[RMDB]
RNA sequence: GGGAACGACUCGAGUAGAGUCGAAAAGGAGGAAAGCAAAGAAAGCCACGGGGCUAGCGAGUGGAUGUUCCGCCCCAAGGGGAGCCGAGUGAGGCUUAUCCCGGGGAACUCGGUAAUUCGCCCCGAAGAGAUAUAUCAUGUUCGCAUGAUAUAUCUCAAAAGAAACAACAACAACAAC
Reactivity to DMS in 0.01 (KOAc 150mM, MgCl2 10mM, bicine 150mM(pH8.5), 24C), signal-to-noise 4, nucleotides 027 to 126: g010g010a040g010g010a070a050a060g010c050a040a090a110g000a120a120a120g010c080c130a150c050g010g000g010g020c000u010a080g000c020g000a020g010u000g020g020a120u020g010u000u000c010c020g010c020c000c010c010a050a090g010g000g010g010a020g020c000c000g010a160g010u020g020a170g020g010c000u000u000a030u010c000c000c010g010g000g000g000a200a040c020u010c020g010g000u010a070a170u000u010c220g010c020c000c000c010g010a060a050
Reactivity to 2A3 in 0.01 (KOAc 150mM, MgCl2 10mM, bicine 150mM(pH8.5), 24C), signal-to-noise 4, nucleotides 027 to 126: g060g020a020g020g030a090a050a030g040c050a070a050a060g060a060a130a010g080c010c010a030c020g000g000g000g000c010u010a020g070c010g010a010g010u060g030g060a100u170g130u190u030c020c010g030c010c000c010c010a080a140g000g000g000g000a000g000c000c020g030a050g140u200g080a060g010g000c000u010u020a050u060c000c010c000g000g000g000g000a000a010c010u000c000g000g010u060a110a130u090u110c060g010c010c010c020c000g000a010a030